Structure probing data (2A3 and DMS) for a 207-nucleotide construct.
The data come from the RNA Mapping Database (RMDB), library OK3TST.
The reactions ran in a buffer of 150 mM KOAc, 10 mM MgCl2 and 150 mM bicine (pH 8.5), at 24 C.
DMS adducts were read by reverse transcription with MarathonRT.
RNA sequence: GGGAACGACUCGAGUAGAGUCGAAAAGAAGCAGUCCUUAUUGUGUGUGAUGUUUAGUCAUCGCACUGUCCCUACGGGCUGCCAACGUAGGUCCAAUGUGCCGAGAGGCACUAGAAGUACGGCUUAUUAUGAGGCAUCGCCGUACCAAUGAUGCUGACCAGUCCUAUGAUUUCGAUCAUAGGACUGGAAAAGAAACAACAACAACAAC
Reactivity to 2A3 in 0.01 (KOAc 150mM, MgCl2 10mM, bicine 150mM(pH8.5), 24C), signal-to-noise 7, nucleotides 027 to 156: g130a040a000g010c010a000g000u020c010c020u120u150a180u190u200g080u010g000u000g000u010g030a020u010g080u040u220u210a280g120u180c000a000u000c000g010c000a000c010u020g100u050c030c000c010u030a030c040g000g000g010c010u000g000c010c010a060a020c060g090u090a050g020g050u010c010c030a090a130u090g000u010g000c000c000g010a020g010a030g020g000c000a010c000u020a030g020a080a010g010u020a000c010g000g010c020u080u060a060u150u090a140u300g100a070g040g030c030a030u040c040g000c020c000g020u040a000c010c010a050a040u110g030a020u060g020c010u020g020a040
Reactivity to DMS in 0.01 (KOAc 150mM, MgCl2 10mM, bicine 150mM(pH8.5), 24C), signal-to-noise 3, nucleotides 027 to 156: g010a100a080g030c020a030g020u000c000c010u000u000a070u000u010g010u010g010u000g060u000g020a010u000g030u000u000u000a190g020u000c020a000u000c000g040c010a020c010u000g000u000c040c010c030u000a180c190g030g000g000c010u010g010c020c080a030a070c100g000u000a100g020g020u020c050c050a100a140u000g020u000g040c020c000g010a300g000a280g040g020c000a010c020u000a060g010a110a080g000u010a040c020g020g010c020u010u000a150u000u000a100u000g030a110g010g010c070a090u010c110g020c030c030g010u000a030c020c050a050a180u010g000a110u010g010c020u000g010a300